[RMDB]
RNA sequence: GGGAACGACUCGAGUAGAGUCGAAAAAGGGCUGGAUUCGUCCAGCCCUGCACAUUCGUACGCAACGAAGCGUACGUCAUUACGCAAAUCACGUAAAGCGUAGAACCACGGACUUCGGUCCGUGGAACCGCGAAUGUGAAUUCGUUCACAUUCGCGGAAAAGAAACAACAACAACAAC
Reactivity to DMS in 0.01 (KOAc 150mM, MgCl2 10mM, bicine 150mM(pH8.5), 24C), signal-to-noise 2, nucleotides 027 to 126: a010g000g000g000c000u000g050g000a010u000u000c180g020u010c010c000a000g000c010c010c000u000g000c100a030c090a130u000u000c000g010u010a000c010g000c000a130a060c240g000a220a120g000c020g000u000a000c040g020u000c260a090u000u000a000c010g010c020a010a090a170u030c150a090c130g020u000a080a140a170g010c000g020u000a030g010a020a240c000c010a000c000g000g010a010c000u000u010c170g010g000u000c000c000g000u000g000g010a000a030
Reactivity to 2A3 in 0.01 (KOAc 150mM, MgCl2 10mM, bicine 150mM(pH8.5), 24C), signal-to-noise 2, nucleotides 027 to 126: a000g000g030g020c010u000g000g000a050u050u040c140g010u000c060c000a000g000c000c000c000u030g020c000a020c010a140u080u070c010g010u010a000c010g000c050a260a040c190g190a180a050g000c000g000u000a000c000g000u000c000a090u000u110a010c010g000c020a070a050a080u240c110a120c160g040u110a050a030a050g000c010g010u010a020g030a030a000c000c010a010c000g000g020a000c000u040u040c210g000g000u000c000c000g000u000g000g000a000a000